[RMDB]
RNA sequence: GGGAACGACUCGAGUAGAGUCGAAAAGGAGCGACCAGGAUAUCCAUUCGCGGAGACAACAUCAAGAUCACUGCGCCGUCGAAUGUAACAGUGGAUACUCCGCAGGCGAAUUUCACUGGAGAUGUGAAGUCAUCAUAGACUUCGGUCUAUGAUGACUAAAAGAAACAACAACAACAAC
Reactivity to DMS in 0.01 (KOAc 150mM, MgCl2 10mM, bicine 150mM(pH8.5), 24C), signal-to-noise 3, nucleotides 027 to 126: g000g000a070g010c070g010a180c040c010a080g030g010a080u000a040u010c060c020a090u010u000c080g040c010g010g000a040g000a140c240a030a090c090a120u010c140a120a130g010a140u010c020a050c070u020g030c180g030c060c070g020u000c090g000a060a090u000g000u010a060a090c080a030g010u000g000g000a070u020a070c050u000c010c010g000c040a080g000g010c110g020a040a070u010u020u000c000a050c010u000g010g000a120g000a100u000g030u000g000a090
Reactivity to 2A3 in 0.01 (KOAc 150mM, MgCl2 10mM, bicine 150mM(pH8.5), 24C), signal-to-noise 2, nucleotides 027 to 126: g030g020a070g040c060g020a000c020c040a010g010g000a040u050a030u100c040c010a090u070u090c060g020c010g020g020a010g020a030c060a040a000c010a080u190c040a020a020g060a120u040c020a020c000u040g000c020g000c100c040g100u250c090g080a150a060u160g020u100a080a030c010a040g030u000g020g000a000u000a060c020u000c010c000g000c030a010g040g110c060g020a030a020u000u010u020c080a110c070u020g020g050a040g020a090u150g030u060g090a050